This 207-nucleotide RNA was probed chemically with DMS and 2A3. 2A3 adducts were read by reverse transcription with SuperScript II with manganese. DMS adducts were read by reverse transcription with MarathonRT. The RNA was probed in 150 mM KOAc, 10 mM MgCl2 and 150 mM bicine (pH 8.5) at 24 C.
RNA sequence: GGGAACGACUCGAGUAGAGUCGAAAACUCAUGGUGGUGGCGACAGAGACAUACUCACUAGGUCUGUUAUAAUUGGAAAUGAAACUGUCAGCCACGGUGAUGAAUUGUGUAAAAUCAAAUUGCAUUUCAUGGAUGCUGAGCAUGAUAUAAGUUAUUACUAGGAUAAUUUAUUCGUAAAUUAUCCUAGAAAAGAAACAACAACAACAAC
Reactivity to DMS in 0.01 (KOAc 150mM, MgCl2 10mM, bicine 150mM(pH8.5), 24C), signal-to-noise 2, nucleotides 027 to 156: c040u010c020a050u010g000g030u010g030g000u000g000g020c020g000a130c010a050g000a120g000a300c010a050u010a100c070u030c070a070c090u010a130g050g040u000c010u010g010u000u000a070u000a070a140u000u000g030g010a130a100a070u000g020a070a100a300c030u010g010u000c020a260g030c000c020a030c020g010g000u010g010a100u000g000a090a100u010u020g020u010g020u000a060a060a130a110u010c060a030a060a100u010u000g050c010a040u000u000u010c010a070u010g030g020a100u000g020c030u000g020a100g020c040a050u000g010a080u000a100u010a060a150g010u000u000a140u000u000a150
Reactivity to 2A3 in 0.01 (KOAc 150mM, MgCl2 10mM, bicine 150mM(pH8.5), 24C), signal-to-noise 4, nucleotides 027 to 156: c000u030c020a050u090g090g030u060g060g000u010g000g030c040g010a000c010a010g030a000g000a040c000a010u060a080c020u070c100a070c100u030a110g070g010u000c050u030g090u140u120a130u080a210a190u180u120g080g040a030a170a110u090g030a110a090a030c010u000g000u010c010a030g000c020c000a000c000g000g000u000g010a040u020g010a040a190u140u030g020u040g030u100a090a130a010a040u100c070a010a040a050u100u040g020c010a000u020u050u120c050a060u130g080g010a050u060g030c060u070g030a020g050c030a030u030g040a010u090a020u050a120a020g010u140u190a050u250u240a080
For DMS, 3,466 sequencing reads were counted. High 2A3 reactivity points to a flexible backbone, as in loops and unpaired stretches. For 2A3, 1,597 sequencing reads were counted.